[RMDB]
RNA sequence: GGGAACGACUCGAGUAGAGUCGAAAAUGUCAGUGCUGGAGGAAGUAGCGAUGAUGGUGUGACAGUGGAGGUGUUAGGUGGUGUUGGUGAUGAAGAUGGGAAUGGAAUUAGCAAUAAAGGCAAGAACAAAGACACCUUUUACUUUACCAACCUGUAAGGUACCGUGCAUAUUCGUAUGCACGGUACCAAAAGAAACAACAACAACAAC
Reactivity to 2A3 in 0.01 (KOAc 150mM, MgCl2 10mM, bicine 150mM(pH8.5), 24C), signal-to-noise 2, nucleotides 027 to 156: u110g010u010c010a000g020u020g110c020u070g000g020a050g020g040a040a070g000u070a030g000c050g040a090u080g010a000u070g010g000u070g000u050g020a040c020a040g000u030g000g020a030g050g000u010g020u060u080a060g030g010u000g000g090u020g040u010u040g000g010u050g000a060u090g060a000a050g020a010u070g000g030g050a000a070u070g000g010a050a120u130u050a060g020c020a000a100u050a250a000a000g060g000c040a000a030g040a070a030c120a090a040a000g040a000c020a070c000c000u040u010u080u100a100c000u010u000u120a140c010c000a060a030c000c050u070g060u120a110a000